[RMDB]
RNA sequence: GGGAACGACUCGAGUAGAGUCGAAAAGAAGGCUUAAAGCGCUUUUUCGUGGAGGCCACACGCCCACUUGCAAUGGCCAUUAUGUUUUUGGGCUAUAAAGUGCAGCUCUGACAAAAGCGUUUGCUUAUUAGACACCUAACUUCGGUUAGGUGUCUAAAAAAGAAACAACAACAACAAC
Reactivity to DMS in 0.01 (KOAc 150mM, MgCl2 10mM, bicine 150mM(pH8.5), 24C), signal-to-noise 2, nucleotides 027 to 126: g020a100a060g000g000c030u020u010a050a080a080g030c080g030c010u000u000u020u010u010c050g010u000g000g000a080g000g010c040c020a060c000a100c100g000c010c010c000a040c150u000u010g000c070a070a040u000g010g000c040c010a140u000u020a060u010g020u010u000u010u010u010g000g000g000c000u040a180u000a030a080a150g020u020g000c120a080g000c000u010c010u000g020a060c140a030a060a030a020g000c040g000u000u000u000g010c010u010u000a130
Reactivity to 2A3 in 0.01 (KOAc 150mM, MgCl2 10mM, bicine 150mM(pH8.5), 24C), signal-to-noise 2, nucleotides 027 to 126: g080a040a040g060g000c090u100u170a160a000a010g000c010g030c000u020u040u000u000u030c090g030u050g010g090a040g000g070c000c040a030c000a000c090g000c000c010c010a050c000u020u100g040c030a060a060u100g010g080c030c000a030u080u190a110u040g020u010u030u000u080u020g000g000g000c000u000a020u090a270a150a030g050u060g030c040a050g000c080u010c000u070g020a000c030a000a020a000a000g010c000g010u000u010u060g010c000u000u040a050
The data come from the RNA Mapping Database (RMDB), libraries RFM100 and RFMREP.
The record gives the reactivity of an RNA of 177 nucleotides to DMS and 2A3.
2A3 adducts were read by reverse transcription with SuperScript II with manganese.